[RMDB]
RNA sequence: GGGAACGACUCGAGUAGAGUCGAAAACUUGUGUUGGGCUUGAGAGCGAUACGCGCUCGCUUGUGCUCAUUAUUAUUCGCGUAAGCCACGACCCUGUCACAAGCCGGCUCGACACGGGUCUGGUCGCUCUGUGAGUUGGUUUCGACCAGCUCGCGGGAAAAGAAACAACAACAACAAC
Reactivity to DMS in 0.01 (KOAc 150mM, MgCl2 10mM, bicine 150mM(pH8.5), 24C), signal-to-noise 9, nucleotides 027 to 126: c030u010u010g010u010g010u010u000g000g000g010c050u010u020g010a090g000a040g010c000g010a200u030a070c180g010c020g020c190u000c040g010c030u010u010g000u010g010c020u010c080a070u030u030a070u030u030a090u020u010c090g010c020g000u020a060a200g010c010c050a080c140g000a050c020c010c000u000g000u010c000a050c080a050a050g010c070c070g000g000c040u010c070g000a020c050a040c070g010g000g000u000c010u010g000g010u010c050g010c040
Reactivity to 2A3 in 0.01 (KOAc 150mM, MgCl2 10mM, bicine 150mM(pH8.5), 24C), signal-to-noise 9, nucleotides 027 to 126: c000u010u020g000u000g010u020u040g010g000g010c030u050u080g120a020g000a010g060c010g040a070u060a110c100g010c000g000c040u010c010g000c000u010u030g010u040g010c010u000c080a020u010u080a080u060u040a070u030u050c050g000c000g010u020a030a010g010c010c010a040c030g060a120c000c000c000u030g070u080c000a000c000a000a010g010c010c010g010g000c000u000c010g000a010c000a010c010g000g000g000u000c000u000g010g010u050c010g010c020
Chemical mapping of a 177-nucleotide RNA with DMS and 2A3. Source: RMDB library OK1LIB, as collected in RNAgym.